[RMDB]
The record gives the reactivity of an RNA of 177 nucleotides to DMS and 2A3.
The reactions ran in a buffer of 150 mM KOAc, 10 mM MgCl2 and 150 mM bicine (pH 8.5), at 24 C.
DMS (dimethyl sulfate) methylates the pairing face of unpaired adenines and cytosines.
DMS adducts were read by reverse transcription with MarathonRT.
Values cover nucleotides 27 to 126.
Source: RMDB library OK2TRN, as collected in RNAgym.
RNA sequence: GGGAACGACUCGAGUAGAGUCGAAAAAUUGAUAGGCGAUAAAAGUCUUCGGGUUGACAUCGAUAGCCCCCGAGACCCUACUUGUCUCGGAGUAGAGGUGGGGCUUUACGAUGCCCCGGGAUAAGAGCUCUUACAUUUCUUUCGAGAAAUGUAAGAGAAAAGAAACAACAACAACAAC
Reactivity to DMS in 0.01 (KOAc 150mM, MgCl2 10mM, bicine 150mM(pH8.5), 24C), signal-to-noise 6, nucleotides 027 to 126: a080u010u000g010a110u010a060g010g020c050g010a120u000a080a110a110a180g010u000c000u000u010c010g000g000g010u010u010g000a110c010a020u000c020g000a090u000a030g010c010c010c000c020c300g000a100g000a100c050c030c000u000a010c010u000u000g000u010c140u010c130g010g000a020g010u000a010g000a080g020g010u010g010g000g010g000c000u000u000u000a050c010g010a020u000g000c030c000c000c000g000g000g000a030u000a070a090g000a190g000
Reactivity to 2A3 in 0.01 (KOAc 150mM, MgCl2 10mM, bicine 150mM(pH8.5), 24C), signal-to-noise 3, nucleotides 027 to 126: a000u070u080g050a050u120a160g060g050c060g030a020u080a250a210a060a050g030u020c000u210u260c080g010g000g000u070u200g050a080c000a010u000c000g030a040u020a020g010c000c010c010c000c020g040a070g150a130c010c020c010u020a020c010u020u080g100u150c080u070c240g140g010a000g000u000a010g040a070g030g030u140g020g030g010g020c000u000u010u020a040c000g000a000u000g000c000c000c000c000g010g010g000a090u130a070a050g070a010g040